An RNA of 177 nucleotides, treated with DMS and 2A3 and read out base by base. For 2A3, 1,097 sequencing reads were counted. It was measured as part of the RMDB library OK2TST. For DMS, 825 sequencing reads were counted.
RNA sequence: GGGAACGACUCGAGUAGAGUCGAAAAUGUCCUCAAGGGCCUUGCAACUGUCGUUAGCAGAAGAGGACACAAACAUCUAGACAAUGGCCAAAUGGAGCCCUCAGGCAAUAUGUACUUUAAUAGGCACGUACGAUCGUAGUUUCGACUACGAUCGUACAAAAGAAACAACAACAACAAC
Reactivity to DMS in 0.01 (KOAc 150mM, MgCl2 10mM, bicine 150mM(pH8.5), 24C), signal-to-noise 1, nucleotides 027 to 126: u000g010u000c010c000u000c010a110a120g000g020g000c020c020u000u000g020c070a040a060c040u010g050u000c140g020u030u000a190g040c060a090g070a060a100g000a030g000g000a010c020a030c120a030a090a120c150a050u000c060u000a080g020a060c160a050a070u000g040g000c010c090a030a070a140u010g010g000a110g020c020c010c070u000c130a060g010g000c030a030a120u000a030u030g030u000a070c090u000u000u000a040a100u000a070g000g000c070a100c190
Reactivity to 2A3 in 0.01 (KOAc 150mM, MgCl2 10mM, bicine 150mM(pH8.5), 24C), signal-to-noise 2, nucleotides 027 to 126: u000g030u010c000c000u000c030a040a070g150g000g000c010c050u050u040g000c030a040a080c000u140g190u300c080g030u140u130a030g020c010a010g030a090a000g000a010g010g010a000c000a000c000a010a140a010c020a050u090c030u030a050g040a160c070a110a050u130g030g000c020c000a110a000a000u110g090g000a050g000c010c010c020u080c080a030g050g000c000a000a060u100a080u140g090u020a000c010u090u090u120a210a210u160a130g010g000c080a020c150